[RMDB]
RNA sequence: GGGAACGACUCGAGUAGAGUCGAAAAAUCAUCUGAAGAUCAGCUAUUAGAAGAGAAAGAUCAGUUAAGUCCUUUGGACCUGAGCAGCUUGAUACAAGAACUACUGAUUUCAACUUCUUUGGCUUAAAAAAGGCCACAGAGUUCGCUCUGUGGCCAAGGUAGGGAUAAACUUCGGUUUAUCCCUACCAAAAGAAACAACAACAACAAC
Reactivity to 2A3 in 0.01 (KOAc 150mM, MgCl2 10mM, bicine 150mM(pH8.5), 24C), signal-to-noise 1, nucleotides 027 to 156: a000u050c000a000u020c040u180g060a080a010g050a120u090c050a010g030c000u030a080u170u030a140g010a010a010g010a000g030a070a090a020g050a020u020c030a030g000u100u150a210a020g020u050c000c010u170u190u240g030g050a050c030c110u140g050a100g080c000a030g030c100u080u110g040a120u170a180c060a050a030g000a060a020c030u130a000c000u060g010a020u000u030u060c090a110a040c020u000u000c000u030u030u010g000g000c010u000u000a000a000a040a010a000a020g000g000c000c000a020c010a000g020a000g020u020u030c080g040c080u030c000u000g040u000g000g040c000c000a000a000
Chemical mapping of a 207-nucleotide RNA with 2A3. Source: RMDB library M2RFPK, as collected in RNAgym. The RNA was probed in 150 mM KOAc, 10 mM MgCl2 and 150 mM bicine (pH 8.5) at 24 C. Reactivities are given for positions 27 through 156.